Record summary:
This 207-nucleotide RNA was probed chemically with 2A3 and DMS. Source: RMDB library M2RFPK, as collected in RNAgym. For DMS the reverse transcriptase was MarathonRT. Reactivities are given for positions 27 through 156. The reactions ran in a buffer of 150 mM KOAc, 10 mM MgCl2 and 150 mM bicine (pH 8.5), at 24 C.
RNA sequence: GGGAACGACUCGAGUAGAGUCGAAAAGAGCGAUUAGACAAAGGGGUAGAGCUACAUAUUAGAUAGCUGUAUAAUCGUUCAAGUUACAUCAAAACAUGUUCAAUAUUUAUUACUUACUUUCCUUUCUGCCAGAGUACGGUAUUCGUACCGUACUCAAGUCAAUAUUGGUAUUCGUACCAAUAUUGACAAAAGAAACAACAACAACAAC
Reactivity to 2A3 in 0.01 (KOAc 150mM, MgCl2 10mM, bicine 150mM(pH8.5), 24C), signal-to-noise 9, nucleotides 027 to 156: g000a000g000c000g010a000u010u030a020g050a070c090a050a130a050g060g020g030g030u070a040g030a010g070c010u010a010c020a080u260a190u220u170a090g190a300u010a010g020c000u000g020u030a030u020a020a010u010c000g000u000u000c010a020a010g030u040u110a060c040a060u110c080a050a090a070a090c070a060u090g040u100u100c060a120a050u070a170u180u180u140a150u120u100a060c040u070u020a030c000u040u080u110c010c000u030u090u080c030u040g070c040c030a050g000a000g000u000a000c000g000g000u000a010u000u050c100g030u010a000c000c000g000u000a000c010u000c000a000a000
Reactivity to DMS in 0.01 (KOAc 150mM, MgCl2 10mM, bicine 150mM(pH8.5), 24C), signal-to-noise 3, nucleotides 027 to 156: g030a050g020c000g000a050u000u000a020g010a110c040a060a080a060g000g000g030g070u000a070g000a050g010c000u000a030c000a150u000a270u000u000a130g000a180u000a020g020c010u000g020u000a010u010a020a010u000c010g020u010u000c020a090a160g010u000u000a080c080a080u000c060a070a090a080a110c080a070u010g000u000u000c050a100a130u000a100u000u000u020a050u000u000a090c050u010u000a080c050u010u000u000c010c030u010u000u000c030u000g030c020c070a180g000a050g010u000a000c010g000g000u000a040u000u010c300g030u000a000c020c000g000u010a010c000u000c000a020a050